RNA sequence: GGGAACGACUCGAGUAGAGUCGAAAAGGGGUCAUUUGUCCGUCCAGGCUGAUGACCUACACUGAAGCCUCCACGGUGUAGCAAGGCCUGGUCGGAUUUCGAAAUGACGGAGGCACCCAAAUCUUAACUGCGCACCUUCGGGUGCGCAGUUAAGAAAUGUGAUUACUACUUUCGAGUAGUAAUCACAAAAAGAAACAACAACAACAAC
Reactivity to 2A3 in 0.01 (KOAc 150mM, MgCl2 10mM, bicine 150mM(pH8.5), 24C), signal-to-noise 1, nucleotides 027 to 156: g120g030g030g030u040c040a000u120u170u300g030u010c070c000g010u000c000c000a000g000g020c010u010g010a300u010g000a050c000c000u000a000c000a000c000u050g020a170a050g010c020c000u000c000c000a030c020g000g000u000g000u000a020g000c050a090a200g000g000c010c000u000g030g010u020c030g000g000a000u040u050u090c040g070a020a060a000u040g020a000c000g000g000a000g010g000c000a020c000c000c010a030a130a100u000c000u000u000a000a000c020u020g000c000g000c000a010c010c020u050u080c220g060g000g000u030g000c000g000c030a000g000u000u020a000a000g000a000a000a000
An RNA of 207 nucleotides, treated with 2A3 and read out base by base.
Conditions: 150 mM KOAc, 10 mM MgCl2 and 150 mM bicine (pH 8.5), 24 C.
Reactivities are rounded to 0.1 and cut off at 0 and 3.
The 2A3 profile rests on 1,247 reads.